Chemical mapping of a 207-nucleotide RNA with 2A3.
Reactivities are given for positions 27 through 156.
2A3 adducts were read by reverse transcription with SuperScript II with manganese.
For 2A3, 553 sequencing reads were counted.
RNA sequence: GGGAACGACUCGAGUAGAGUCGAAAAAGUGUCACCCUGUUGCCUAGGCUGGAGUGCAGUGGCAUGAUCUUGGCUCACUACAACCUCCACCUCCCAGGUUCAAGCAAUUUUCGUGUGUCAGCCUCCUGAGUAGCUGGGAUUACAGGUGUGCGCCACCGCCCAAUACUUGGUUCGCCAAGUAUUGGGCAAAAGAAACAACAACAACAAC
Reactivity to 2A3 in 0.01 (KOAc 150mM, MgCl2 10mM, bicine 150mM(pH8.5), 24C), signal-to-noise 1, nucleotides 027 to 156: a030g100u110g110u150c020a060c000c020c000u020g150u050u030g030c010c050u130a140g120g000c080u020g000g020a030g010u300g070c040a040g050u060g140g000c050a050u070g060a020u020c070u050u050g040g000c050u060c050a000c120u120a100c030a010a050c040c000u020c010c000a140c000c000u030c060c020c010a030g000g000u130u210c050a050a000g000c010a010a000u030u000u000u280c030g000u060g040u020g020u000c000a020g070c030c020u000c000c090u040g080a260g040u010a010g000c020u000g070g010g000a090u000u020a000c020a040g000g000u120g040u010g200c000g000c000c010a040c020c020